[RMDB]
RNA sequence: GGGAACGACUCGAGUAGAGUCGAAAAGGAUCACUCUUCGGAGUGAUCCAAACUUGGUAAACGCAGACACCAUGAAAGAUCGAAAAACGAUCAAAGCGAAAAAAACCCUCGACUUCGGUCGAGGGAACUAGAACAUGAGGUUCGCCUCAUGUUCUAGAAAAGAAACAACAACAACAAC
Reactivity to DMS in 0.01 (KOAc 150mM, MgCl2 10mM, bicine 150mM(pH8.5), 24C), signal-to-noise 2, nucleotides 027 to 126: g020g000a010u000c000a000c020u000c000u000u010c280g040g000a030g020u000g020a010u000c000c010a010a040a140c040u000u000g010g030u010a040a030a030c050g010c030a090g000a300c300a030c000c010a030u000g000a060a030a030g010a040u000c000g000a070a090a080a170a200c040g060a030u000c000a040a060a210g000c080g020a000a020a030a080a090a110a120c000c000c000u000c000g000a010c000u000u000c160g050g040u000c030g000a030g000g000g010a000a000
Reactivity to 2A3 in 0.01 (KOAc 150mM, MgCl2 10mM, bicine 150mM(pH8.5), 24C), signal-to-noise 2, nucleotides 027 to 126: g000g000a000u020c010a000c010u010c030u050u150c300g060g000a000g000u000g000a000u000c000c000a000a000a000c010u010u020g000g000u030a090a070a020c020g000c030a020g030a090c040a030c050c010a010u030g080a190a050a000g000a020u010c020g090a130a010a080a060a250c010g010a000u010c000a030a040a010g020c010g010a130a000a010a000a010a020a070c020c010c000u000c000g000a000c010u030u080c250g070g000u010c000g000a000g000g010g000a000a010